[RMDB]
RNA sequence: GGGAACGACUCGAGUAGAGUCGAAAAUCAGGAGUCUUCGGACUCCUGAAAAGAGGUUCGAAUCCCACCCGAACCGCGGGUAGCGGCCCAAAAAUAAAAUAUAAAGGGUUAAGUUCGCUUAACCCAACCAUUAUUUAUUGUUCGCAAUAAAUAAUGGAAAAGAAACAACAACAACAAC
Reactivity to DMS in 0.01 (KOAc 150mM, MgCl2 10mM, bicine 150mM(pH8.5), 24C), signal-to-noise 2, nucleotides 027 to 126: u000c030a010g000g000a040g020u010c010u000u000c250g030g010a000c000u000c000c000u000g010a010a020a030a140g000a100g000g000u000u000c010g010a210a050u010c010c000c010a190c120c150c010g000a030a010c030c040g020c130g000g000g010u000a070g020c080g020g000c010c000c020a000a070a060a080a150u010a130a080a080a070u000a120u030a110a080a180g000g000g000u000u000a010a050g000u010u000c230g020c010u000u010a010a000c000c000c000a030a060
Reactivity to 2A3 in 0.01 (KOAc 150mM, MgCl2 10mM, bicine 150mM(pH8.5), 24C), signal-to-noise 3, nucleotides 027 to 126: u000c000a000g000g000a000g020u000c000u060u120c260g080g000a000c000u000c000c000u000g000a010a010a000a010g070a060g010g010u070u150c010g030a050a060u020c000c000c010a010c020c040c000g020a070a040c030c040g040c050g030g020g020u070a120g190c050g090g020c030c000c020a070a070a010a010a020u200a070a050a060a000u300a050u130a090a090a080g000g000g000u010u010a010a000g010u030u090c180g010c060u000u000a000a000c000c000c010a000a000